[RMDB]
RNA sequence: GGGAACGACUCGAGUAGAGUCGAAAAUAUGAUAGUGGAUUUUAUGGCGCCUACAUGGGGAUGGUACACUGCUACAUUGUCAUGGAACAUAGGUAUGCCAUGAUGGUACAACAGGAUGGUAGAAAGGUAUGAUGGUACAAAGGUAUGACACAGGUAAAUUUUAUCGUCAGUUCGCUGACGAUAAAAUAAAAGAAACAACAACAACAAC
Reactivity to 2A3 in 0.01 (KOAc 150mM, MgCl2 10mM, bicine 150mM(pH8.5), 24C), signal-to-noise 3, nucleotides 027 to 156: u140a020u030g060a030u020a030g080u050g070g060a090u000u010u050u110a030u090g000g010c030g000c020c000u030a040c020a050u060g010g000g040g000a010u050g010g100u040a020c190a050c130u160g070c030u050a020c030a030u040u140g250u260c010a010u010g000g060a120a030c010a160u060a050g050g000u130a130u170g000c000c000a010u020g000a010u020g020g070u060a050c040a090a000c010a010g000g000a000u030g000g020u000a000g010a010a010a000g000g000u020a040u140g040a010u010g000g000u010a000c000a000a020a020g010g000u080a040u110g040a030c040a000c000a110g120g090u070a090a140
Reactivity to DMS in 0.01 (KOAc 150mM, MgCl2 10mM, bicine 150mM(pH8.5), 24C), signal-to-noise 2, nucleotides 027 to 156: u000a080u020g000a060u000a060g050u010g000g000a140u000u000u000u000a070u010g050g070c020g000c010c000u010a050c050a070u000g040g010g000g010a030u000g000g000u010a040c030a160c230u030g030c010u000a040c020a030u000u000g030u000c000a010u000g010g000a050a120c220a260u000a080g030g040u000a070u000g100c000c000a020u000g010a030u000g020g000u000a100c060a020a050c030a050g000g010a060u010g000g010u000a020g000a030a040a020g020g020u000a060u000g010a040u000g020g020u020a030c000a020a030a040g000g010u000a020u000g000a130c070a060c070a070g030g000u000a040a080